[RMDB]
RNA sequence: GGGAACGACUCGAGUAGAGUCGAAAAUGGAACAAUCAUUGCUUAUCGUUCAAGCGGUGGCUUUGGUGUACGUCUUGAUGCUGGAGAUGGUUUCCAAGGUGCUGAGAUAUCACCUUAUUAUGAUUCACGGUCAACAGGAAUUCGUUCCUGUUGACCGAAAAGAAACAACAACAACAAC
Reactivity to DMS in 0.01 (KOAc 150mM, MgCl2 10mM, bicine 150mM(pH8.5), 24C), signal-to-noise 2, nucleotides 027 to 126: u000g020g010a100a080c090a090a040u010c030a050u000u000g010c010u000u000a030u010c020g010u020u020c270a130a150g000c000g020g010u010g020g020c030u010u010u000g020g000u000g000u000a050c120g000u000c030u000u020g000a080u010g000c040u000g010g010a060g000a090u000g010g010u000u010u000c040c030a060a040g020g020u010g000c040u020g010a120g010a120u030a100u000c010a020c010c010u000u010a030u010u020a040u020g000a110u000u000c070a220
Reactivity to 2A3 in 0.01 (KOAc 150mM, MgCl2 10mM, bicine 150mM(pH8.5), 24C), signal-to-noise 2, nucleotides 027 to 126: u050g060g020a100a000c020a010a110u030c010a020u020u070g000c010u150u180a060u060c030g060u130u140c110a080a020g030c000g030g000u040g000g000c000u050u020u020g050g000u060g020u060a030c010g010u000c020u030u070g040a040u140g040c040u050g020g030a050g040a100u060g110g000u010u050u030c010c000a010a010g010g000u020g000c080u030g080a080g010a140u120a020u120c010a010c010c000u030u070a190u040u080a110u110g180a070u060u100c080a010